[RMDB]
RNA sequence: GGGAACGACUCGAGUAGAGUCGAAAAGAGAGCAGCCCAGCACAAGGGGAGGCAGCACCGUGGCAGGCAGAGUGCCUGGAGUGCUGCUUGGUGCUGGGGGUGGGCAUGAGCAUGUGCUCAUGUGUAUGAGUAGGUGAGCGUGUGGGUGUGCAUUGCACGCCGUGGUGCCAUUCGUGGCACCACGGCGAAAAGAAACAACAACAACAAC
Reactivity to 2A3 in 0.01 (KOAc 150mM, MgCl2 10mM, bicine 150mM(pH8.5), 24C), signal-to-noise 1, nucleotides 027 to 156: g130a000g030a000g000c060a010g000c000c000c000a000g050c000a000c020a120a120g000g030g000g000a010g000g000c010a020g000c000a000c020c020g060u070g150g060c000a050g030g030c060a090g120a170g280u160g040c000c000u040g160g100a200g000u000g010c000u020g000c000u010u000g000g000u010g020c000u000g010g030g000g000g000u160g000g040g000c030a010u000g000a000g000c010a070u270g190u300g090c000u060c000a000u050g030u000g000u030a130u150g030a000g000u060a020g070g080u060g010a040g010c070g000u060g000u080g120g000g000u040g010u030g000c040a090u100u160g000c050a000

An RNA of 207 nucleotides, treated with 2A3 and read out base by base. The 2A3 profile rests on 567 reads. The reactions ran in a buffer of 150 mM KOAc, 10 mM MgCl2 and 150 mM bicine (pH 8.5), at 24 C. Source: RMDB library OK3TST, as collected in RNAgym.